Structure probing data (DMS and 2A3) for a 177-nucleotide construct. For DMS the reverse transcriptase was MarathonRT. The RNA was probed in 150 mM KOAc, 10 mM MgCl2 and 150 mM bicine (pH 8.5) at 24 C. High 2A3 reactivity points to a flexible backbone, as in loops and unpaired stretches.
RNA sequence: GGGAACGACUCGAGUAGAGUCGAAAAAGCUGCGCGAAAUCGGCGGAAAGGACCCCGCUAUCGGGAGCGGCUAGCAGCGAGGGUUGCCGCUCCAGCCGCGCUAUGAAGCAGCCAUAGCAGAUUUACAACGUAUACCAUAUUUCGAUAUGGUAUACGUAAAAGAAACAACAACAACAAC
Reactivity to DMS in 0.01 (KOAc 150mM, MgCl2 10mM, bicine 150mM(pH8.5), 24C), signal-to-noise 9, nucleotides 027 to 126: a080g000c020u000g010c010g020c160g010a050a100a060u010c120g010g020c010g010g000a050a080a130g010g000a210c080c050c010c020g020c030u000a050u010c120g010g000g010a040g010c010g010g000c010u000a070g020c080a060g010c080g010a110g010g010g010u010u000g000c020c000g020c020u000c010c020a040g010c130c110g010c210g010c010u000a010u010g000a070a050g000c010a010g000c010c010a010u000a020g010c010a230g000a130u000u010u010a110c210a120
Reactivity to 2A3 in 0.01 (KOAc 150mM, MgCl2 10mM, bicine 150mM(pH8.5), 24C), signal-to-noise 6, nucleotides 027 to 126: a000g020c010u020g000c090g000c050g110a050a030a130u160c070g020g010c010g000g040a110a120a040g150g030a070c010c010c020c000g000c030u080a080u170c070g090g000g010a020g010c000g010g000c030u050a040g000c050a000g050c020g090a160g060g100g000u050u080g020c000c000g000c000u000c000c000a000g000c000c020g080c010g000c000u010a000u030g020a060a000g000c000a000g000c000c010a000u020a010g000c030a010g040a150u160u230u170a100c100a150